An RNA of 177 nucleotides, treated with DMS and 2A3 and read out base by base. The RNA was probed in 150 mM KOAc, 10 mM MgCl2 and 150 mM bicine (pH 8.5) at 24 C. Source: RMDB library OK2TRN, as collected in RNAgym. For 2A3, 3,204 sequencing reads were counted.
[RMDB]
RNA sequence: GGGAACGACUCGAGUAGAGUCGAAAACGGGAGGGUCACCGAGCUGGUGGCGCGGCCACUGUUAGCCGCGCUGCGGCCCGAGCUGGGUUGUGUACUGCAGCCGCUGAGCGGUGAGUAUGCGGCCAGCGAGAUUUCCGAAAUUCGUUUCGGAAAUCUCAAAAGAAACAACAACAACAAC
Reactivity to DMS in 0.01 (KOAc 150mM, MgCl2 10mM, bicine 150mM(pH8.5), 24C), signal-to-noise 2, nucleotides 027 to 126: c090g020g010g000a070g020g000g000u000c070a120c130c020g000a070g010c020u010g030g080u000g000g030c000g020c000g010g010c000c030a110c240u000g010u010u010a110g000c000c000g020c010g000c010u000g020c000g020g000c000c030c000g010a130g010c010u000g000g000g000u020u000g020u000g010u010a020c010u000g030c080a230g010c000c010g020c030u020g000a170g020c000g030g020u000g010a030g010u000a010u000g020c010g000g020c010c000a020g010c070
Reactivity to 2A3 in 0.01 (KOAc 150mM, MgCl2 10mM, bicine 150mM(pH8.5), 24C), signal-to-noise 3, nucleotides 027 to 126: c010g000g020g040a080g000g050g000u030c060a010c110c030g000a040g020c060u210g070g080u060g000g000c010g010c010g020g000c020c000a170c120u110g060u200u280a020g000c010c010g000c000g000c010u000g020c030g040g000c030c000c000g000a020g010c020u040g020g120g020u290u030g010u020g020u010a010c010u000g150c070a070g040c000c040g000c090u220g140a090g070c000g010g000u030g020a000g010u010a020u020g020c000g020g000c000c000a000g010c010